This 177-nucleotide RNA was probed chemically with DMS and 2A3. Source: RMDB library OK2TRN, as collected in RNAgym. The 2A3 profile rests on 4,036 reads. Reactivities are given for positions 27 through 126. Conditions: 150 mM KOAc, 10 mM MgCl2 and 150 mM bicine (pH 8.5), 24 C.
[RMDB]
RNA sequence: GGGAACGACUCGAGUAGAGUCGAAAAGUCACUGAGUCUCAGUCUCACACUGUGUCUGAGAGUGUGACUGACUCAGAGAGUCUGAGAGACUCUCUCUCUGACUCAGACUGUGUGUGACUGUCUGACAGAUGACCCUUGUAUUCGUACAAGGGUCAUCAAAAGAAACAACAACAACAAC
Reactivity to DMS in 0.01 (KOAc 150mM, MgCl2 10mM, bicine 150mM(pH8.5), 24C), signal-to-noise 4, nucleotides 027 to 126: g020u010c030a130c090u000g000a090g010u010c040u000c020a010g000u000c030u000c020a010c020a040c020u000g030u010g030u010c080u010g000a050g000a090g010u000g020u010g000a090c090u010g000a050c050u010c060a050g010a090g020a020g000u000c010u010g010a080g010a050g000a160c180u000c160u000c000u000c030u000c010u000g010a080c010u000c000a100g010a020c030u000g010u000g010u000g030u000g000a050c010u000g010u010c070u000g010a070c100a160
Reactivity to 2A3 in 0.01 (KOAc 150mM, MgCl2 10mM, bicine 150mM(pH8.5), 24C), signal-to-noise 3, nucleotides 027 to 126: g040u060c020a020c160u080g060a020g060u000c010u010c060a000g020u020c000u000c020a000c000a000c030u080g050u090g080u300c040u120g080a060g010a030g090u120g010u010g090a120c070u050g030a030c010u020c100a000g000a020g010a000g030u000c020u120g140a100g000a020g020a230c010u040c010u020c000u000c010u000c010u090g060a060c000u000c010a000g000a010c030u040g030u020g000u000g000u010g070a020c010u000g040u000c050u030g020a020c030a040